[RMDB]
RNA sequence: GGGAACGACUCGAGUAGAGUCGAAAAGAUGAGAAUACGUGACUUGGUCAGAGGCGGAAAGACACAAGCACGAACGAUACAGUAGAGUAUCGAUCCGCCAACAGAUGCACGUUGUGAUCGUGCUAGAGAUGGGUAUACUAUUCGUAGUAUACCCAUCAAAAGAAACAACAACAACAAC
Reactivity to 2A3 in 0.01 (KOAc 150mM, MgCl2 10mM, bicine 150mM(pH8.5), 24C), signal-to-noise 9, nucleotides 027 to 126: g090a080u250g040a020g050a140a070u150a110c020g010u010g090a130c010u020u020g010g000u030c030a040g050a130g140g000c010g000g030a100a100a020g040a020c050a000c010a190a000g010c010a000c060g030a090a020c010g000a000u020a020c010a010g300u300a030g140a010g090u010a020u020c010g010a050u010c000c000g000c000c010a030a010c040a040g130a070u130g000c020a010c050g030u070u100g110u080g090a080u150c040g000u010g000c010u050a030g020a000
Reactivity to DMS in 0.01 (KOAc 150mM, MgCl2 10mM, bicine 150mM(pH8.5), 24C), signal-to-noise 9, nucleotides 027 to 126: g020a110u030g010a110g010a140a080u030a120c040g020u000g010a090c010u010u010g010g000u010c040a090g020a190g000g010c010g000g000a070a110a090g000a050c040a100c040a040a030g000c020a010c030g000a060a130c060g000a010u000a010c020a190g010u040a110g020a140g010u000a010u000c010g020a130u020c010c010g020c020c010a160a100c220a070g000a070u030g010c040a020c040g010u000u010g010u010g010a080u030c090g010u000g000c000u000a030g000a300
Conditions: 150 mM KOAc, 10 mM MgCl2 and 150 mM bicine (pH 8.5), 24 C. Chemical mapping of a 177-nucleotide RNA with 2A3 and DMS. The DMS profile rests on 32,219 reads. It was measured as part of the RMDB library OK1LIB. The 2A3 profile rests on 22,561 reads. Values cover nucleotides 27 to 126.